[RMDB]
RNA sequence: GGGAACGACUCGAGUAGAGUCGAAAAGUAAAGGCGGAGGAGGGUUUUGGCUUGCGCUCGGUCCGCCCGCGCGUGGUGUGGGCUGGAAUUCGUGUGUCGAGGAUGAUUAAUGCCGCGCGCCCAGGAAUCAUGUAUAAGAUUUCGAUCUUAUACAUGAAAAAGAAACAACAACAACAAC
Reactivity to DMS in 0.01 (KOAc 150mM, MgCl2 10mM, bicine 150mM(pH8.5), 24C), signal-to-noise 8, nucleotides 027 to 126: g010u010a070a110a110g010g010c020g010g010a070g010g010a090g010g000g010u000u000u000u000g010g000c060u000u000g010c050g010c010u000c010g010g010u000c010c020g010c010c000c020g020c040g010c050g020u000g020g020u010g020u000g010g000g000c030u000g030g010a070a080u000u000c030g020u010g010u000g010u010c050g010a080g000g000a080u000g000a100u010u010a080a080u010g010c010c010g010c030g010c040g010c010c030c030a110g000g000a120a150
Reactivity to 2A3 in 0.01 (KOAc 150mM, MgCl2 10mM, bicine 150mM(pH8.5), 24C), signal-to-noise 5, nucleotides 027 to 126: g030u040a030a060a070g020g000c020g010g030a040g020g050a040g010g060g010u040u060u110u140g080g030c040u040u060g010c070g020c010u010c020g040g100u000c010c010g000c000c000c000g000c000g000c010g040u110g030g070u050g000u050g000g050g000c070u100g060g060a070a060u130u080c040g010u110g010u020g070u170c020g030a040g050g030a040u050g010a020u060u170a150a020u090g010c010c000g000c010g000c000g000c010c000c000a020g020g070a040a070
An RNA of 177 nucleotides, treated with DMS and 2A3 and read out base by base. As a SHAPE reagent, 2A3 marks flexible, mostly unpaired nucleotides at the ribose 2'-OH. Source: RMDB library M2PK90, as collected in RNAgym.